[RMDB]
RNA sequence: GGGAACGACUCGAGUAGAGUCGAAAAGGCGAAAACACUACGUGACGUACCUGAAUGGUGGCAAGGCCUCGAAGAGGGAUCACCGGGGAAACCUACUCGAGCGAGGCGCAGAUCGCGCGCCAGUUCGCAGCUUGAAAUUGUUCGCAAUUUCAAGCUGAAAAGAAACAACAACAACAAC
Reactivity to DMS in 0.01 (KOAc 150mM, MgCl2 10mM, bicine 150mM(pH8.5), 24C), signal-to-noise 1, nucleotides 027 to 126: g080g000c020g010a070a030a170a110c040a030c080u010a100c130g000u000g030a180c060g010u000a100c000c010u000g000a060a110u000g010g000u000g000g000c170a120a120g010g000c000c040u000c070g000a130a110g000a080g030g000g010a250u010c020a040c070c020g050g010g000g020a120a090a060c050c020u010a010c010u000c000g050a010g020c050g030a070g020g000c000g070c050a050g030a030u000c200g030c060g010c000g000c010c000a070g010u000u000c010g040
Reactivity to 2A3 in 0.01 (KOAc 150mM, MgCl2 10mM, bicine 150mM(pH8.5), 24C), signal-to-noise 1, nucleotides 027 to 126: g060g010c020g010a050a050a070a040c050a060c060u250a090c100g080u050g040a040c040g050u120a130c000c040u040g100a110a160u120g030g040u010g010g000c090a070a000g280g150c050c000u010c000g240a280a170g030a100g070g010g040a060u060c010a020c060c010g000g010g020g020a040a040a000c040c000u010a010c000u000c010g020a020g000c090g040a100g000g000c020g000c010a010g050a260u150c110g000c020g000c010g000c150c000a020g000u020u040c070g000

Structure probing data (DMS and 2A3) for a 177-nucleotide construct. Conditions: 150 mM KOAc, 10 mM MgCl2 and 150 mM bicine (pH 8.5), 24 C. For 2A3, 810 sequencing reads were counted. For DMS the reverse transcriptase was MarathonRT. The data come from the RNA Mapping Database (RMDB), library VIROID.